[RMDB]
RNA sequence: GGGAACGACUCGAGUAGAGUCGAAAAAAAGAUAUGGAGUUUAGGGAGCUAGUGCUUCCGUUGAAAUCACUUCGGAAACGAAGUGAUGGAGGAAGGACUAGCGAAGAACUAAACUCCUAAGUCAAAACGUAAUACCUUCCUUCGGGAAGGUAUUACGAAAAGAAACAACAACAACAAC
Reactivity to DMS in 0.01 (KOAc 150mM, MgCl2 10mM, bicine 150mM(pH8.5), 24C), signal-to-noise 1, nucleotides 027 to 126: a070a120a150g010a010u020a300u000g020g000a030g000u020u010u000a000g000g010g010a110g020c010u000a000g000u010g000c010u000u000c010c000g000u000u020g000a150a130a010u000c000a030c010u010u000c010g020g010a060a050a150c000g000a060a010g050u000g000a000u000g000g010a040g010g010a020a000g000g000a000c000u000a000g050c000g020a070a080g030a150a170c000u000a010a020a030c000u000c020c010u000a040a060g000u000c010a080a070a110a180